This 177-nucleotide RNA was probed chemically with DMS and 2A3. It was measured as part of the RMDB library TTRDEL.

RNA sequence: GGGAACGACUCGAGUAGAGUCGAAAAGAUAUGGAACCAGACCCGGAAACACACUCCGUUGAAAUCGGAAACGAUGGAGGAGUGGUUUCCGCUGGUUCCUAAGUCAAAACAGGAGUUCGCUCCUGAAGAUACGAAUAUGGUUCGCCAUAUUCGUAUCAAAAGAAACAACAACAACAAC
Reactivity to DMS in 0.01 (KOAc 150mM, MgCl2 10mM, bicine 150mM(pH8.5), 24C), signal-to-noise 8, nucleotides 027 to 126: g010a050u000a300u010g010g010a020a010c000c000a010g000a190c190c300c110g010g010a010a010a010c010a130c010a010c000u000c000c000g000u010u010g000a110a150a020u000c000g010g000a100a100a140c010g010a010u000g000g000a060g010g010a020g020u000g010g000u000u000u000c000c010g030c010u000g010g000u000u000c000c000u000a010a070g010u000c030a080a080a120a190c020a010g000g000a010g010u000u010c220g010c010u000c000c000u000g000a050a080
Reactivity to 2A3 in 0.01 (KOAc 150mM, MgCl2 10mM, bicine 150mM(pH8.5), 24C), signal-to-noise 7, nucleotides 027 to 126: g010a020u100a040u170g000g000a000a010c000c010a000g070a110c100c120c100g040g070a030a010a000c300a000c000a000c300u010c010c000g140u220u040g000a030a020a000u010c010g000g020a080a060a020c020g010a000u020g000g050a020g000g000a010g000u000g000g000u000u000u000c000c000g000c000u000g000g000u000u000c010c000u000a010a000g010u010c030a010a020a100a150c010a010g010g020a000g010u100u160c240g080c150u010c000c000u010g020a020a030

The 2A3 profile rests on 24,310 reads. Conditions: 150 mM KOAc, 10 mM MgCl2 and 150 mM bicine (pH 8.5), 24 C.